Chemical mapping of a 177-nucleotide RNA with DMS and 2A3. Source: RMDB library OK2TRN, as collected in RNAgym. The 2A3 profile rests on 775 reads.
[RMDB]
RNA sequence: GGGAACGACUCGAGUAGAGUCGAAAAAGCGGAGUUAUGAACGUCUCAUACAAAACAAUCAGAUCGUUAGGCAGUCGAUUGGCAACAGUGUCACCUUCAAAUGGUUCUCCCCUAGCAAGAUAACUGCAUAUGCUCUCCCUUUCGAGGGAGAGCAUAUAAAAGAAACAACAACAACAAC
Reactivity to DMS in 0.01 (KOAc 150mM, MgCl2 10mM, bicine 150mM(pH8.5), 24C), signal-to-noise 2, nucleotides 027 to 126: a070g020c060g030g010a170g010u000u000a070u000g000a090a040c190g000u000c110u010c040a060u020a070c080a070a060a020a080c050a090a110u010c050a080g010a090u030c060g000u010u000a070g010g020c040a040g020u000c030g000a040u000u000g000g000c090a010a070c050a010g020u010g000u020c050a060c070c020u010u000c120a040a070a060u000g000g020u040u000c030u000c000c020c000c070u000a030g000c080a020a040g000a080u000a080a110c100u010g000c120
Reactivity to 2A3 in 0.01 (KOAc 150mM, MgCl2 10mM, bicine 150mM(pH8.5), 24C), signal-to-noise 1, nucleotides 027 to 126: a000g040c070g010g000a050g000u160u110a080u210g040a020a040c050g010u060c020u040c030a140u100a030c110a010a120a030a000c010a010a010u020c020a010g040a100u030c010g000u090u010a090g020g050c000a000g050u040c010g010a040u110u030g060g000c060a020a020c010a110g000u000g020u070c080a030c010c010u090u020c080a080a110a300u210g040g000u050u020c030u040c060c000c000c010u000a040g000c010a000a010g040a080u060a080a090c060u010g040c000

The reactions ran in a buffer of 150 mM KOAc, 10 mM MgCl2 and 150 mM bicine (pH 8.5), at 24 C. Reactivities are given for positions 27 through 126. DMS adducts were read by reverse transcription with MarathonRT.